Chemical mapping of a 177-nucleotide RNA with 2A3 and DMS. DMS adducts were read by reverse transcription with MarathonRT. The data come from the RNA Mapping Database (RMDB), library RFMREP. The reactions ran in a buffer of 150 mM KOAc, 10 mM MgCl2 and 150 mM bicine (pH 8.5), at 24 C. The DMS profile rests on 774 reads. Reactivities are rounded to 0.1 and cut off at 0 and 3.
[RMDB]
RNA sequence: GGGAACGACUCGAGUAGAGUCGAAAAGAAACAGCUGGUUCCGACCGAAACAUGUCGAAGCAUGACCUCUGCCGAGGUAGUCUGUGGGGUAGAGCGACGGAUUGGGGGACCGCACUCCGAGAGGAGUCUUCUAACCUACGUUCGCGUAGGUUAGAAGAAAAGAAACAACAACAACAAC
Reactivity to 2A3 in 0.01 (KOAc 150mM, MgCl2 10mM, bicine 150mM(pH8.5), 24C), signal-to-noise 1, nucleotides 027 to 126: g050a000a050a000c040a020g060c050u240g020g060u010u000c020c000g060a050c010c030g050a130a070a010c000a020u110g020u110c060g070a060a030g050c030a060u050g020a020c000c010u030c000u000g000c050c010g040a030g060g040u060a080g080u000c070u070g130u070g050g110g010g030u050a050g000a000g070c060g040a020c040g000g060a080u130u190g180g000g000g010g000a000c010c000g010c010a030c000u000c000c010g030a030g030a040g030g010a010g010u000
Reactivity to DMS in 0.01 (KOAc 150mM, MgCl2 10mM, bicine 150mM(pH8.5), 24C), signal-to-noise 2, nucleotides 027 to 126: g000a060a080a080c120a090g020c030u050g050g000u000u010c040c000g020a190c070c030g010a040a120a110c110a090u020g000u010c090g030a180a220g000c010a030u000g000a210c040c000u000c010u000g030c090c130g000a140g020g000u010a010g010u010c070u010g000u000g010g000g000g030u000a040g000a120g000c140g020a210c070g000g010a200u000u010g000g000g000g010g030a100c030c080g000c090a130c010u000c020c000g010a300g000a150g000g010a050g000u000